[RMDB]
This 170-nucleotide RNA was probed chemically with 2A3 and DMS. The 2A3 profile rests on 6,645 reads. It was measured as part of the RMDB library 15KLIB. The RNA was probed in 150 mM KOAc, 10 mM MgCl2 and 150 mM bicine (pH 8.5) at 24 C.

RNA sequence: GGGAACGACUCGAGUAGAGUCGAAAAAUCACCUCCAGAGGACCCCUUCAGCGAACAGAAGAGUCUCUCACGCGGUAGGAGCAAGCCCAUAGCGAUAGGGGGAGAUGCUGGGAGUUAGAGGAGACCUGAACCUGCGUGUUCGCACGCAGGAAAAGAAACAACAACAACAAC
Reactivity to 2A3 in 0.01 (KOAc 150mM, MgCl2 10mM, bicine 150mM(pH8.5), 24C), signal-to-noise 4, nucleotides 027 to 129: a000u060c050a080c000c000u080c060c010a010g020a060g040g050a060c000c020c010c000u010u090c050a010g010c000g040a070a050c010a030g090a140a000g020a040g050u030c000u000c020u030c000a080c070g030c050g060g010u070a040g090g000a020g020c010a030a010g050c000c000c000a050u130a020g030c040g040a040u140a120g000g000g000g020g000a020g020a000u100g020c010u000g000g020g010a060g000u040u040a030g000a010g010g000a030g010a050c000c000u020g020a030a050
Reactivity to DMS in 0.01 (KOAc 150mM, MgCl2 10mM, bicine 150mM(pH8.5), 24C), signal-to-noise 5, nucleotides 027 to 129: a100u070c080a150c000c020u030c040c050a080g040a080g030g030a160c100c010c040c070u030u070c060a130g030c060g050a100a060c080a050g000a070a010g020a120g020u020c030u030c040u100c090a140c170g020c040g030g040u100a040g030g020a000g040c000a090a130g010c140c000c020a160u060a100g020c070g000a060u030a020g000g000g000g000g000a060g030a030u120g030c080u060g060g010g000a000g060u060u030a090g030a040g070g000a100g000a050c090c070u010g010a070a050